RNA sequence: GGGAACGACUCGAGUAGAGUCGAAAACCGGGGUGCUGGCCAGCGGUGCGGAAGCCUGCUGGUAGUUCGGCGUGGUGACGAAGGCCAGGGCGAUCAUGCCCAGCGCGCCGGCGGGCAGUGCCCAGGACACGUGCUCACUAUUCGUAGUGAGCACGUGAAAAGAAACAACAACAACAAC
Reactivity to DMS in 0.01 (KOAc 150mM, MgCl2 10mM, bicine 150mM(pH8.5), 24C), signal-to-noise 1, nucleotides 027 to 126: c000c020g000g030g000g050u000g000c010u000g010g000c000c010a040g000c010g000g040u000g030c000g030g090a170a260g010c010c000u000g010c010u010g000g000u000a010g000u000u000c010g000g000c000g060u000g020g020u010g040a050c050g010a170a120g000g000c020c030a120g000g000g040c000g000a150u010c160a120u020g000c030c010c020a220g010c070g020c010g020c020c000g010g000c000g020g020g030c000a020g010u000g000c000c000c000a140g000g000a290
Reactivity to 2A3 in 0.01 (KOAc 150mM, MgCl2 10mM, bicine 150mM(pH8.5), 24C), signal-to-noise 1, nucleotides 027 to 126: c020c000g000g010g000g000u000g030c010u010g000g040c000c000a020g000c010g000g000u230g050c000g040g140a110a070g000c020c010u030g000c020u000g010g000u020a000g010u060u090c010g000g010c030g030u060g010g050u120g030a130c120g150a140a070g170g010c060c110a070g010g000g010c000g030a090u250c060a080u300g020c010c000c000a020g010c000g010c000g010c020c000g020g030c000g000g010g010c020a000g010u000g010c000c010c010a010g000g000a000
Record summary: This 177-nucleotide RNA was probed chemically with DMS and 2A3. Conditions: 150 mM KOAc, 10 mM MgCl2 and 150 mM bicine (pH 8.5), 24 C. For 2A3, 1,622 sequencing reads were counted.